RNA sequence: GGGAACGACUCGAGUAGAGUCGAAAACAUGGACAUGAGCCGUAUCUGUCUGAGUGCAAUGCAUGUGUGCUUGGCCACCAUCUUGUGCUGUAUAAUAGAUGCAGAAAUAGCCCCUAUUUUAUACUGUGGAAGCACAGAUGGAUGCACAGACAGUUGAGACGACCAUUAGUUUCGACUAAUGGUCGUCAAAAGAAACAACAACAACAAC
Reactivity to 2A3 in 0.01 (KOAc 150mM, MgCl2 10mM, bicine 150mM(pH8.5), 24C), signal-to-noise 2, nucleotides 027 to 156: c040a130u120g020g050a040c090a120u180g060a060g030c020c040g040u090a070u050c010u000g020u000c000u000g100a050g120u000g000c030a050a080u090g040c010a060u100g040u020g000u010g290c000u020u090g210g060c010c000a000c000c000a020u120c090u190u170g110u180g040c140u110g070u050a020u000a010a080u020a020g020a050u100g000c030a020g180a180a120a050u280a060g020c000c000c140c000u030a090u020u130u000u000a030u020a020c010u030g120u120g070g050a090a000g000c000a000c000a010g010a000u000g000g020a000u000g000c000a000c000a000g020a010c000a010g000u020u080g040a060
This 207-nucleotide RNA was probed chemically with 2A3. 2A3 adducts were read by reverse transcription with SuperScript II with manganese.